[RMDB]
The data come from the RNA Mapping Database (RMDB), library OK1LIB. The record gives the reactivity of an RNA of 177 nucleotides to DMS and 2A3. 2A3 adducts were read by reverse transcription with SuperScript II with manganese. Conditions: 150 mM KOAc, 10 mM MgCl2 and 150 mM bicine (pH 8.5), 24 C. Values cover nucleotides 27 to 126.
RNA sequence: GGGAACGACUCGAGUAGAGUCGAAAAGGCGUAGAUAUUUUAUCUAUUAUCUAUCAACAUGGCAUAGAAAUUGAAUUUCCUGAUGAAGUGUUACAAGAAGCUGAAGCAGUACCUGAUCAUAUUGAAAACUAAACAGACUAUUCGUAGUCUGUUUAGUAAAAGAAACAACAACAACAAC
Reactivity to DMS in 0.01 (KOAc 150mM, MgCl2 10mM, bicine 150mM(pH8.5), 24C), signal-to-noise 5, nucleotides 027 to 126: g010g020c160g010u000a010g020a020u000a020u040u020u040u030a050u020c050u010a040u010u010a060u010c010u010a070u010c060a080a170c100a060u020g000g000c050a050u010a040g010a040a030a050u030u020g010a050a180u010u010u000c020c030u020g000a050u020g010a070a050g010u010g000u000u020a070c130a070a070g000a080a100g000c020u000g010a100a080g030c050a030g010u010a070c050c030u010g000a040u020c060a060u020a070u020u010g010a080a090a090
Reactivity to 2A3 in 0.01 (KOAc 150mM, MgCl2 10mM, bicine 150mM(pH8.5), 24C), signal-to-noise 7, nucleotides 027 to 126: g060g000c050g030u030a010g020a040u030a110u050u190u180u110a110u040c030u020a050u060u050a050u030c010u000a030u050c020a020a120c020a150u150g040g000c060a020u030a070g060a040a100a040u050u110g030a040a060u050u050u010c010c000u040g020a040u040g040a020a020g040u050g040u160u070a040c030a050a040g070a070a000g040c000u030g030a060a000g020c030a010g020u040a070c010c010u060g070a080u050c020a040u070a110u190u130g050a070a000a040